[RMDB]
RNA sequence: GGGAACGACUCGAGUAGAGUCGAAAAAGUCUGAUUAUCGCAUUAAAUUCAGCAUGAUAUUACAUGAUUUAAUGUGAUAUCAGUGCGAUAACAUGCAGGACCGAGACGACUAUACCUGUGUCAACAAGAUAAUGUUUUAUUUCGAUAGGACAUUAUCAAAAGAAACAACAACAACAAC
Reactivity to DMS in 0.01 (KOAc 150mM, MgCl2 10mM, bicine 150mM(pH8.5), 24C), signal-to-noise 9, nucleotides 027 to 126: a100g000u010c000u010g000a150u010u010a010u010c010g000c010a020u010u020a050a080a120u050u030c210a150g020c140a090u010g000a040u000a020u010u010a010c010a020u010g010a170u040u040u040a060a010u000g010u000g000a010u000a000u000c000a030g000u010g000c010g010a020u010a010a040c290a090u030g020c090a140g010g000a030c030c030g010a180g000a170c040g000a030c020u010a050u000a030c000c010u000g000u000g000u000c030a080a110c160a070a090
Reactivity to 2A3 in 0.01 (KOAc 150mM, MgCl2 10mM, bicine 150mM(pH8.5), 24C), signal-to-noise 9, nucleotides 027 to 126: a000g020u010c020u020g030a130u030u090a030u050c020g000c000a000u020u090a090a090a100u290u170c080a060g080c030a080u040g020a010u020a020u040u050a020c010a010u030g090a230u210u130u280a110a010u010g000u000g000a000u000a000u000c010a010g020u010g010c000g000a000u010a030a030c050a030u160g060c050a040g040g020a010c010c020g010a020g030a050c030g000a000c010u030a020u020a080c000c040u070g010u010g020u060c030a040a040c030a160a050
Conditions: 150 mM KOAc, 10 mM MgCl2 and 150 mM bicine (pH 8.5), 24 C. Structure probing data (DMS and 2A3) for a 177-nucleotide construct. DMS adducts were read by reverse transcription with MarathonRT. The data come from the RNA Mapping Database (RMDB), library OK1LIB. As a SHAPE reagent, 2A3 marks flexible, mostly unpaired nucleotides at the ribose 2'-OH. For DMS, 37,037 sequencing reads were counted.